[RMDB]
RNA sequence: GGGAACGACUCGAGUAGAGUCGAAAACAGAACUAAUUCGUUAGUUCUGGCAUAUAACCUUCACCAAUUAGGUUCAAAUAAGUGGUAAAAAUAAAAAUAAAACGGGGUCUGCAUUCGUGCAGACCAAAUACUGAGAAAUAUUCGUAUUUCUCAGUAUAAAAGAAACAACAACAACAAC
Reactivity to 2A3 in 0.01 (KOAc 150mM, MgCl2 10mM, bicine 150mM(pH8.5), 24C), signal-to-noise 2, nucleotides 027 to 126: c000a000g010a010a020c000u000a000a060u070u090c110g040u020u010a010g000u000u000c000u000g000g000c010a110u300a020u080a120a010c000c000u030u030c030a020c010c000a020a000u040u030a040g060g030u220u270c020a060a020a150u050a170a000g010u010g000g000u090a090a060a030a040a040u190a060a130a060a030a020u190a050a100a070a020c040g240g000g160g000u010c010u010g000c000a010u050u080c110g030u030g000c000a000g000a000c010c000a010a000
Reactivity to DMS in 0.01 (KOAc 150mM, MgCl2 10mM, bicine 150mM(pH8.5), 24C), signal-to-noise 2, nucleotides 027 to 126: c000a030g000a000a000c010u000a000a040u000u030c220g050u000u000a000g000u000u000c020u000g010g000c260a080u020a120u010a070a020c010c000u000u010c040a050c010c010a020a100u000u000a000g000g030u000u000c170a080a070a070u000a050a010g030u010g000g000u000a020a070a080a060a120u040a040a040a080a070a080u030a100a020a050a080c200g020g000g000g010u000c000u000g030c010a010u000u020c200g000u010g000c030a010g000a000c030c000a020a010